[RMDB]
RNA sequence: GGGAACGACUCGAGUAGAGUCGAAAAAGCAGGACUUGAACCCAUGCCAUGUGGCCCCAGAGUCCACAUGUUGAGCUGCCCAGCACACUGCAGCCCAUGUCAACAGUGCACUAGGUUGGCUGUUAGGCGGUCCACAUCUGUUCGCAGAUGUGGACCGAAAAGAAACAACAACAACAAC
Reactivity to DMS in 0.01 (KOAc 150mM, MgCl2 10mM, bicine 150mM(pH8.5), 24C), signal-to-noise 1, nucleotides 027 to 126: a070g030c050a060g000g020a200c070u000u000g000a060a160c060c020c010a070u010g000c120c060a060u000g010u000g000g050c000c020c070c100a160g000a130g010u000c000c010a050c060a020u000g010u010u000g020a030g020c060u010g010c020c040c080a070g000c100a040c090a150c050u000g000c010a080g010c040c010c020a010u000g020u000c010a040a040c070a000g000u000g000c090a040c080u000a140g000g030u000u000g010g020c000u000g000u010u010a060g000g000

Conditions: 150 mM KOAc, 10 mM MgCl2 and 150 mM bicine (pH 8.5), 24 C. Structure probing data (DMS) for a 177-nucleotide construct. It was measured as part of the RMDB library OK2TST. For DMS, 884 sequencing reads were counted.